Conditions: 150 mM KOAc, 10 mM MgCl2 and 150 mM bicine (pH 8.5), 24 C. This 177-nucleotide RNA was probed chemically with 2A3 and DMS. The data come from the RNA Mapping Database (RMDB), library OK1LIB. 2A3 is a SHAPE reagent: it acylates the 2'-hydroxyl of flexible nucleotides of all four kinds. For DMS the reverse transcriptase was MarathonRT.
[RMDB]
RNA sequence: GGGAACGACUCGAGUAGAGUCGAAAAGUUGCCUCCUUCAUGCUACACUUGGGGAACUUUGUCCGUCGUGCAGGGAAGUAUUACUCUGUUGAUUAUUGUAGGAGGAAGAUUGAUAGGAUGAAAUUGCUGAUCUUUCCAGUUUCGACUGGAAAGAUCAAAAAGAAACAACAACAACAAC
Reactivity to 2A3 in 0.01 (KOAc 150mM, MgCl2 10mM, bicine 150mM(pH8.5), 24C), signal-to-noise 4, nucleotides 027 to 126: g060u080u180g120c020c000u000c010c000u010u070c020a030u100g070c040u080a060c000a120c120u150u210g050g000g000g000a030a010c000u030u000u110g160u030c020c010g000u070c070g100u110g100c020a130g030g000g010a050a000g100u050a180u050u200a170c000u000c010u010g060u070u020g060a190u030u200a050u100u080g070u040a060g060g000a030g060g010a040a010g060a060u100u130g050a060u170a130g190g060a060u120g060a090a130a070u100u180g010c150
Reactivity to DMS in 0.01 (KOAc 150mM, MgCl2 10mM, bicine 150mM(pH8.5), 24C), signal-to-noise 3, nucleotides 027 to 126: g000u010u020g020c040c010u020c010c000u000u000c030a040u010g010c080u010a080c060a030c090u020u000g000g000g010g020a080a080c060u000u000u030g020u010c020c020g000u000c010g010u020g010c030a120g000g010g010a030a060g020u010a090u030u010a140c020u020c030u010g000u000u000g000a060u030u010a060u000u000g000u000a060g000g000a050g020g010a090a060g000a080u030u030g000a110u040a070g000g000a070u020g000a020a110a130u030u010g010c270